[RMDB]
RNA sequence: GGGAACGACUCGAGUAGAGUCGAAAAGAUAUGGAAUCUGACCACUCUAUGAAGGUGAGUCCAGUCACAGUAUGUCGGAAACGACAUAUCACAGCUGGACUCACUGGAGAGUCCAGAUUCCUAAGUCGUAGUUAUAGCACUUCGGUGCUAUAACUACAAAAGAAACAACAACAACAAC
Reactivity to 2A3 in 0.01 (KOAc 150mM, MgCl2 10mM, bicine 150mM(pH8.5), 24C), signal-to-noise 1, nucleotides 027 to 126: g060a060u170a090u280g000g020a020a080u060c020u010g010a060c050c050a260c080u000c010u090a300u210g040a040a000g090g000u020g020a020g020u040c000c000a000g070u230c050a030c000a080g000u000a000u000g000u010c010g060g000a030a180a060c020g000a000c010a000u010a000u020c010a010c030a020g000c000u070g010g000a010c000u010c000a000c000u000g000g000a000g000a010g000u000c000c020a000g000a030u010u000c000c000u020a150a020g050u030c090
Reactivity to DMS in 0.01 (KOAc 150mM, MgCl2 10mM, bicine 150mM(pH8.5), 24C), signal-to-noise 1, nucleotides 027 to 126: g000a050u010a300u000g060g000a010a010u000c000u040g000a130c120c240a050c000u000c000u000a240u010g030a190a220g000g010u000g040a000g010u000c000c000a000g020u000c010a060c300a300g000u010a000u040g020u000c000g070g030a080a090a170c000g000a010c010a010u000a030u000c020a140c300a100g000c000u000g020g000a030c010u000c000a000c040u000g000g000a000g070a000g050u000c130c010a030g000a030u000u000c000c000u000a040a050g000u010c200